[RMDB]
RNA sequence: GGGAACGACUCGAGUAGAGUCGAAAACGCCAAGAACGUGCAUGUCCCGUACACGCAGGCAGCAUCUGGAUUCGAGAUGUGGAAAAACAACUCAGGCCGCCCACUGCAGGAAACCGCCCCUUUUGGGCACAGGUACCGAUUUCGAUCGGUACCUGUGAAAAGAAACAACAACAACAAC
Reactivity to DMS in 0.01 (KOAc 150mM, MgCl2 10mM, bicine 150mM(pH8.5), 24C), signal-to-noise 3, nucleotides 027 to 126: c170g000c030c040a120a090g010a090a150c060g020u030g020c080a050u000g010u000c020c000c010g000u000a050c070a040c060g020c070a160g010g020c060a180g000c030a060u010c040u000g000g010a220u010u000c120g000a060g020a060u000g010u000g000g020a060a100a060a120a070c070a030a060c050u000c030a130g010g000c030c030g020c030c010c000a070c110u000g000c050a060g000g000a050a080a100c100c080g000c040c010c020c160u000u000u000u000g010g000g020
Reactivity to 2A3 in 0.01 (KOAc 150mM, MgCl2 10mM, bicine 150mM(pH8.5), 24C), signal-to-noise 2, nucleotides 027 to 126: c060g030c020c000a040a070g130a090a000c040g060u050g020c050a030u040g020u070c000c000c000g030u100a050c060a010c010g010c040a030g050g040c040a000g030c030a030u000c010u080g000g110a180u170u180c040g060a030g010a090u030g020u100g090g010a040a040a000a020a050c040a010a050c010u000c050a030g040g000c000c000g000c020c000c000a030c060u070g000c030a030g030g030a010a080a090c050c030g070c000c000c000c020u050u080u130u220g010g000g000
Conditions: 150 mM KOAc, 10 mM MgCl2 and 150 mM bicine (pH 8.5), 24 C. An RNA of 177 nucleotides, treated with DMS and 2A3 and read out base by base. It was measured as part of the RMDB library OK2TRN.